The data come from the RNA Mapping Database (RMDB), library OK1LIB. This 177-nucleotide RNA was probed chemically with DMS and 2A3. For DMS the reverse transcriptase was MarathonRT.
RNA sequence: GGGAACGACUCGAGUAGAGUCGAAAAAGCUGGCAGACACGUGUCGCCGUAGCCGCCAGCAGCACACACGCACUCACAGCCGCUGAUGCUGCUCGUCCUCGCAGCGAAGCACACGGCGUCCACGGUGACGAGUGAGCAUAUUCGUAUGCUCACUCGUAAAAGAAACAACAACAACAAC
Reactivity to DMS in 0.01 (KOAc 150mM, MgCl2 10mM, bicine 150mM(pH8.5), 24C), signal-to-noise 3, nucleotides 027 to 126: a100g010c030u010g010g000c070a080g000a090c060a060c060g010u040g020u000c080g000c020c000g000u010a040g000c020c030g010c010c010a030g060c000a200g000c010a100c040a110c050a070c080g010c060a060c040u000c030a100c090a210g030c070c060g020c070u000g000a130u040g000c010u010g000c000u000c020g020u000c020c030u030c140g030c020a050g030c000g020a170a100g000c000a080c110a060c060g020g000c030g000u040c080c000a060c070g000g010u040g000
Reactivity to 2A3 in 0.01 (KOAc 150mM, MgCl2 10mM, bicine 150mM(pH8.5), 24C), signal-to-noise 5, nucleotides 027 to 126: a000g030c030u030g010g000c020a040g040a170c040a030c110g120u140g080u130c030g050c090c010g030u050a040g040c040c030g000c000c020a020g000c000a000g000c020a020c000a000c000a010c050g000c010a020c040u060c010a080c030a050g030c020c030g050c090u020g000a100u150g020c040u020g020c010u020c060g070u060c020c050u080c070g000c020a030g010c020g030a080a000g000c030a010c000a000c030g020g020c000g020u020c020c030a070c030g020g020u050g020